The record gives the reactivity of an RNA of 177 nucleotides to 2A3.
[RMDB]
RNA sequence: GGGAACGACUCGAGUAGAGUCGAAAAGAUAUGGACCUACGCAGCUUUUGACGAGCGUGGGUCGGAAACGACCCUCCGCUCGAUAAGCUGGUAGGUCCUAAGUCAAACCGACUGUUCGCAGUCGGAAGUCGAUAACCCUCUUCGGAGGGUUAUCGACAAAAGAAACAACAACAACAAC
Reactivity to 2A3 in 0.01 (KOAc 150mM, MgCl2 10mM, bicine 150mM(pH8.5), 24C), signal-to-noise 1, nucleotides 027 to 126: g070a010u050a010u080g020g000a000c030c030u020a030c300g170c300a010g010c100u240u260u300u300g300a180c260g010a010g000c000g080u030g000g010g000u000c000g010g020a040a040a010c000g020a000c030c000c000u030c120c050g000c060u000c000g030a050u080a140a000g020c000u000g010g000u000a000g000g020u000c000c000u010a000a000g000u000c020a000a000a120c010c000g000a000c000u020g010u070u220c300g050c160a000g020u000c000g010g000a050a000
Source: RMDB library TTRDES, as collected in RNAgym.